[RMDB]
RNA sequence: GGGAACGACUCGAGUAGAGUCGAAAAGGGGUCGUCGAUAAGCGUUCCCAGAGCGAGGAUCGUACACUGAAGCCUCCACGGUGUACGGGAGCUCUGCACGCUUUUGACGACGACGGAGGCACCCAAAGCCUAAUACAGUUUCGACUGUAUUAGGCAACCAUGGAGACCUGUUCGCAGGUCUCCAUGGAAAAGAAACAACAACAACAAC
Reactivity to 2A3 in 0.01 (KOAc 150mM, MgCl2 10mM, bicine 150mM(pH8.5), 24C), signal-to-noise 2, nucleotides 027 to 156: g120g020g000g010u010c030g000u000c040g040a170u130a300a020g000c010g040u060u060c030c040c050a000g000a000g000c010g000a240g050g010a000u010c000g000u000a000c000a000c000u020g050a080a000g020c000c000u010c010c000a020c010g000g000u010g000u010a010c050g000g000g000a010g000c000u010c000u010g000c000a010c000g030c010u130u080u110u220g130a050c170g000a000c000g000a000c010g000g000a010g000g000c000a030c000c010c020a090a080a010g000c000c000u000a000a000u000a000c000a000g010u010u070u250c230g210a040c000u000g000u000a000u000u000a000g000g000c010a000a000

Conditions: 150 mM KOAc, 10 mM MgCl2 and 150 mM bicine (pH 8.5), 24 C. The record gives the reactivity of an RNA of 207 nucleotides to 2A3. The 2A3 profile rests on 1,780 reads. It was measured as part of the RMDB library RNAMAK.